The record gives the reactivity of an RNA of 207 nucleotides to 2A3. Values cover nucleotides 27 to 156. 2A3 is a SHAPE reagent: it acylates the 2'-hydroxyl of flexible nucleotides of all four kinds. It was measured as part of the RMDB library OK3TST. For 2A3 the reverse transcriptase was SuperScript II with manganese. The 2A3 profile rests on 5,023 reads.
RNA sequence: GGGAACGACUCGAGUAGAGUCGAAAACGAUCAGUACGUUCGCGUACUGAUCGAAGCUACUGGAGACAGUAGCAAGUCUAAGACCUUGUUAGGAGGAAACAAGGAAAAAUGGAGGAAGGUCGGACCUCCAUACUUAGACAACCUCCAACCGGCCAAAACCUCAUACCAUCUUCGGAUGGUAUGAGGUAAAAGAAACAACAACAACAAC
Reactivity to 2A3 in 0.01 (KOAc 150mM, MgCl2 10mM, bicine 150mM(pH8.5), 24C), signal-to-noise 3, nucleotides 027 to 156: c010g000a000u000c000a000g000u000a010c010g020u040u090c250g010c010g110u000a000c000u010g000a000u000c000g000a010a000g010c000u000a000c000u000g000g020a060g010a030c000a000g000u000a000g000c010a000a020g010u000c000u000a000a030g010a160c000c000u020u000g010u020u040a100g050g080a040g030g080a090a000a000c000a000a000g020g000a080a080a040a000a000u030g010g000a010g030g010a140a200g020g000u010c020g010g090a270c010c000u000c000c000a000u020a040c000u000u000a000g000a000c010a040a070c020c020u050c050c000a020a030c010c000g000g000c010c010a030a030a010